[RMDB]
RNA sequence: GGGAACGACUCGAGUAGAGUCGAAAAAUAGGAGCAGUGUUCGCCAUUAUAGGGGGCUUUGUUCACUGAUUCCCCCUAUUCUCCGGGUACACACUCAACCAAGCAUGAGCAAAAAUUCACUUUGUAAUCAUAUUCGUAGGAGUAAAUAUAACAUUCUAUCAGUUUAAUUCUUCGGAAUUAAACUGAUAAAAGAAACAACAACAACAAC
Reactivity to 2A3 in 0.01 (KOAc 150mM, MgCl2 10mM, bicine 150mM(pH8.5), 24C), signal-to-noise 2, nucleotides 027 to 156: a000u140a090g050g070a030g030c130a070g050u000g010u050u080c050g050c040c010a030u040u030a010u050a020g030g000g000g030g000c010u040u120u120g090u120u070c110a090c050u020g020a060u040u090c000c000c000c010c010u000a010u040u010c040u040c060c000g000g000g000u040a020c020a000c000a010c010u020c010a030a030c020c030a020a010g080c020a050u070g030a000g010c000a000a030a030a090a050u160u150c070a040c090u010u020u120g040u160a160a050u010c040a020u060a160u170u160c110g090u100a050g000g080a010g080u110a010a180a080u220a070u070a110a030c010a070u060u080c010u010

The record gives the reactivity of an RNA of 207 nucleotides to 2A3. The 2A3 profile rests on 1,010 reads. It was measured as part of the RMDB library PDB130. The reactions ran in a buffer of 150 mM KOAc, 10 mM MgCl2 and 150 mM bicine (pH 8.5), at 24 C.